[RMDB]
RNA sequence: GGGAACGACUCGAGUAGAGUCGAAAACCGGCCGCGCAGGCGCCUGCCAAGACCGCCUCUGUCAAUCAAGGGCGAAGGCCGGGGGCUAGAAGGCGAUCAGACACCACCGUAUUCCCGGCCGUAAACGCACAUAGGUUAACUUCGGUUAACCUAUGUGAAAAGAAACAACAACAACAAC
Reactivity to 2A3 in 0.01 (KOAc 150mM, MgCl2 10mM, bicine 150mM(pH8.5), 24C), signal-to-noise 7, nucleotides 027 to 126: c000c000g000g010c020c010g040c010g010c030a030g050g010c010g020c010c000u040g020c010c010a090a050g040a080c040c010g030c010c000u100c040u070g080u080c060a070a130u050c030a080a090g080g010g000c020g040a070a040g020g000c010c000g000g000g000g020g000c040u080a050g040a120a030g090g010c030g040a080u120c040a020g070a070c030a020c050c010a030c010c020g030u030a090u050u060c000c000c000g010g000c000c000g040u050a040a040a010c060g000
Reactivity to DMS in 0.01 (KOAc 150mM, MgCl2 10mM, bicine 150mM(pH8.5), 24C), signal-to-noise 7, nucleotides 027 to 126: c020c010g000g010c030c050g010c060g020c050a070g000g010c050g020c030c020u000g000c030c050a100a090g000a080c130c020g010c010c000u010c050u010g010u000c120a130a120u040c080a090a090g000g000g010c010g010a140a130g000g010c010c010g000g000g010g010g010c080u010a080g010a080a060g000g010c030g000a100u020c090a110g010a110c100a090c060c020a060c050c020g000u020a120u010u010c020c000c000g010g000c020c030g000u020a020a060a090c180g000